[RMDB]
RNA sequence: GGGAACGACUCGAGUAGAGUCGAAAAGAUAUGGAAAGAAAGUGGCGCACUCUAAGACAGGAGUACCGAGUCGGAAACGACUCGGUACUCUCGAGAGUGCGAACUACCACAUUUCUUUCCUAAGUCACAUUAUUACUAUGUUCGCAUAGUAAUAAUGAAAAGAAACAACAACAACAAC
Reactivity to DMS in 0.01 (KOAc 150mM, MgCl2 10mM, bicine 150mM(pH8.5), 24C), signal-to-noise 5, nucleotides 027 to 126: g010a040u000a110u010g000g000a010a010a020g000a020a010a030g020u000g000g000c020g010c000a020c000u000c000u000a180a170g020a220c300a150g000g010a010g030u000a000c000c000g040a030g010u000c000g030g000a040a020a060c000g030a010c000u000c010g010g030u000a000c010u000c000u000c110g000a020g000a020g020u000g000c000g000a020a020c070u020a300c010c000a010c010a080u000u000u010c000u000u000u000c000c000u000a010a080g000u000c010a300
Reactivity to 2A3 in 0.01 (KOAc 150mM, MgCl2 10mM, bicine 150mM(pH8.5), 24C), signal-to-noise 2, nucleotides 027 to 126: g000a020u010a010u100g000g000a010a010a010g000a010a020a010g010u010g020g030c000g000c000a010c000u030c020u040a230a140g120a300c300a300g200g030a000g000u010a000c000c000g030a010g010u020c000g020g000a160a010a000c000g030a000c000u000c010g040g010u000a000c000u000c010u000c010g000a000g000a000g000u000g000c000g000a000a000c010u080a010c000c010a000c000a090u020u020u000c000u000u020u000c000c000u020a020a010g000u020c020a020

An RNA of 177 nucleotides, treated with DMS and 2A3 and read out base by base. Conditions: 150 mM KOAc, 10 mM MgCl2 and 150 mM bicine (pH 8.5), 24 C. For 2A3, 5,336 sequencing reads were counted. Reactivities are given for positions 27 through 126. Reactivities are rounded to 0.1 and cut off at 0 and 3. The DMS profile rests on 7,033 reads. 2A3 is a SHAPE reagent: it acylates the 2'-hydroxyl of flexible nucleotides of all four kinds.